This 207-nucleotide RNA was probed chemically with 2A3. It was measured as part of the RMDB library OK3TST. The RNA was probed in 150 mM KOAc, 10 mM MgCl2 and 150 mM bicine (pH 8.5) at 24 C.
RNA sequence: GGGAACGACUCGAGUAGAGUCGAAAAUCUAUCAAUUUCUCAGCACCGAUUCGGAGCAGAACGAUGUUGAAAAUUUUCAAUUAAACACCGUCGCUCAGCAUUAUUUGAACGACACAAAGGUGGAUUUACCGAUCACCACUAUGCUCAAACUGUACGACUCACCCUUCAAUUUCGAUUGAAGGGUGAGAAAAGAAACAACAACAACAAC
Reactivity to 2A3 in 0.01 (KOAc 150mM, MgCl2 10mM, bicine 150mM(pH8.5), 24C), signal-to-noise 1, nucleotides 027 to 156: u060c040u070a150u160c070a060a110u000u000u160c130u030c010a010g000c000a030c000c000g250a300u050u060c030g070g000a010g000c000a020g030a010a000c000g000a000u030g010u000u020g010a050a050a020a020u100u190u080u190c140a040a060u010u170a100a090a010c100a040c080c000g050u050c030g000c000u000c000a020g050c100a080u070u130a060u300u300u070g100a060a040c000g040a000c000a000c010a000a140a040g000g010u000g000g060a030u020u000u070a110c040c000g050a030u060c010a010c040c000a010c060u030a090u050g000c000u010c000a030a030a130c110u100g040u000a050c010g000a010